[RMDB]
RNA sequence: GGGAACGACUCGAGUAGAGUCGAAAAGCCUGGUGGCUUGUCCGAUUUGCACGGUGACUUGAUUACACUCUCUCAUUCAUGGUCACUUCCGAAGCGCUUUAGUGCCUUCCGUCCCUAAACCGCCAACCACGCGGUACUGAUUCGUCAGUACCGCGUGAAAAGAAACAACAACAACAAC
Reactivity to DMS in 0.01 (KOAc 150mM, MgCl2 10mM, bicine 150mM(pH8.5), 24C), signal-to-noise 3, nucleotides 027 to 126: g040c020c000u010g030g010u030g010g010c010u010u000g000u010c040c030g010a120u020u020u010g010c060a030c120g000g020u010g010a030c060u010u030g010a090u020u030a120c140a100c090u000c030u010c020u000c010a040u020u010c090a090u010g000g030u020c020a100c040u010u020c080c020g000a070a070g010c040g000c080u000u010u020a080g010u010g010c030c030u000u000c050c080g000u010c010c020c010u000a070a090a090c110c030g010c040c060a070a080c160
Reactivity to 2A3 in 0.01 (KOAc 150mM, MgCl2 10mM, bicine 150mM(pH8.5), 24C), signal-to-noise 5, nucleotides 027 to 126: g020c000c000u070g090g060u100g000g020c000u020u040g040u040c000c010g030a100u050u040u180g080c050a040c040g000g010u020g020a040c030u040u050g050a040u110u150a040c050a030c060u060c010u000c010u000c020a070u090u010c020a040u070g100g000u030c000a010c020u050u020c020c020g080a050a030g010c000g000c040u060u050u080a070g010u060g050c010c000u040u010c010c020g070u020c000c000c000u030a060a070a030c040c030g010c010c000a020a010c030
Background:
Conditions: 150 mM KOAc, 10 mM MgCl2 and 150 mM bicine (pH 8.5), 24 C. An RNA of 177 nucleotides, treated with DMS and 2A3 and read out base by base. It was measured as part of the RMDB libraries RFM100 and RFMREP.